[RMDB]
RNA sequence: GGGAACGACUCGAGUAGAGUCGAAAAGGUUCAUUUGACAAAGUCUAUGAUAUUGGCAAUCCUAAAGGAAUUCCUAUUGUUGAUGACCCUGUGGUUGAUUGGCAUUAUUUUGAUGCACAGCCCUUGAGACGGCCUUAGUUCGCUAAGGCCAAAAGAAACAACAACAACAAC
Reactivity to DMS in 0.01 (KOAc 150mM, MgCl2 10mM, bicine 150mM(pH8.5), 24C), signal-to-noise 2, nucleotides 027 to 129: g050g000u040u010c000a000u060u020u060g010a060c080a100a040a190g010u030c050u040a070u020g000a080u010a090u010u000g000g000c070a080a050u000c030c000u030a050a100a080g040g000a160a130u000u000c020c030u000a010u000u000g020u050u010g000a080u020g040a040c070c020c010u030g040u040g000g000u000u000g000a020u010u040g000g000c050a030u020u020a110u000u070u010u040g040a000u040g000c020a090c030a080g010c000c000c040u000u010g040a100g000a170c150
Reactivity to 2A3 in 0.01 (KOAc 150mM, MgCl2 10mM, bicine 150mM(pH8.5), 24C), signal-to-noise 5, nucleotides 027 to 129: g010g000u020u010c030a080u050u010u240g030a020c040a030a060a000g000u020c000u050a080u080g110a060u060a060u180u150g000g000c020a030a040u070c000c000u130a090a080a080g100g020a070a070u020u010c000c060u070a120u040u120g050u030u010g000a130u010g030a080c000c000c010u050g050u090g050g050u000u010g040a250u100u200g130g000c000a000u000u030a090u020u210u120u270g060a020u010g000c000a000c010a030g010c000c000c000u020u040g040a050g030a110c080
This 170-nucleotide RNA was probed chemically with DMS and 2A3. The reactions ran in a buffer of 150 mM KOAc, 10 mM MgCl2 and 150 mM bicine (pH 8.5), at 24 C. DMS adducts were read by reverse transcription with MarathonRT.